[RMDB]
RNA sequence: GGGAACGACUCGAGUAGAGUCGAAAAGAAAUUACGUUUCCUUUACACUUCUCAAACCGGGAUCAAGAGAAGCAAAGCAUCCCUCAUAUCCACGAUGGAGGGUGUCGUGGAGUAAACUGUACCAAAAAGAGCGAACACGGCUUCGGCCGUGUUCGAACUUAGAGCACGUGUUCGCACGUGCUCUAAGAAAAGAAACAACAACAACAAC
Reactivity to 2A3 in 0.01 (KOAc 150mM, MgCl2 10mM, bicine 150mM(pH8.5), 24C), signal-to-noise 2, nucleotides 027 to 156: g050a000a090a020u160u090a030c030g010u000u000u030c010c000u000u070u030a050c000a010c010u010u020c010u000c020a150a150a170c090c100g060g000g070a090u110c080a280a030g000a030g010a020a010g020c050a000a060a000g020c010a040u100c020c030c010u030c050a090u110a100u130c100c040a020c120g050a000u090g120g040a000g020g000g030u010g020u020c000g000u010g010g010a020g010u010a000a080a010c060u130g060u120a090c030c010a000a020a090a140a020g120a050g090c000g000a000a000c000a000c000g000g000c020u050u080c170g110g000c010c000g000u000g000u000u000c000g000a000a000